[RMDB]
RNA sequence: GGGAACGACUCGAGUAGAGUCGAAAACUCCACGCUGGGUAAUGGACGACGGCGGCGUGUGGCGAACAGGGAUACGGGUAGUCAGUGUCUGGAACAUCCCAAGGGGCGGCGGAGCUAGCACCCCGACAAAACGGGCACAAGUUCGCUUGUGCCCGAAUCUUCUUCUAAUCUUCGGAUUAGAAGAAGAAAAAGAAACAACAACAACAAC
Reactivity to 2A3 in 0.01 (KOAc 150mM, MgCl2 10mM, bicine 150mM(pH8.5), 24C), signal-to-noise 2, nucleotides 027 to 156: c000u020c010c000a050c040g000c000u050g000g030g100u140a160a150u050g030g030a020c030g000a010c030g010g020c000g000g020c010g040u050g010u040g030g050c080g020a090a070c060a100g000g000g050a010u060a090c060g000g000g020u040a080g040u030c050a020g030u020g020u090c060u060g010g010a030a040c030a060u040c000c020c010a050a090g020g000g010g020c060g000g010c030g010g080a050g040c030u030a020g000c020a060c000c000c000c000g010a010c050a010a080a050a020c020g010g000g000c000a000c000a000a000g030u060u090c150g010c230u010u010g000u000g000c000c000c000g000a000a000
Reactivity to DMS in 0.01 (KOAc 150mM, MgCl2 10mM, bicine 150mM(pH8.5), 24C), signal-to-noise 1, nucleotides 027 to 156: c040u020c000c010a060c040g020c030u040g000g030g010u000a070a080u000g000g020a080c050g000a090c020g040g040c040g030g000c040g000u000g010u000g010g020c040g000a070a110c050a100g010g000g010a140u000a080c070g040g010g000u010a040g030u000c000a120g000u000g020u000c070u000g030g000a090a080c050a130u000c000c000c010a120a160g010g000g010g030c060g010g000c030g000g010a060g000c010u000a090g030c040a070c030c000c000c010g020a110c120a050a020a130a190c030g010g010g000c000a020c030a020a090g040u000u000c300g010c000u000u010g030u010g000c000c000c000g000a010a010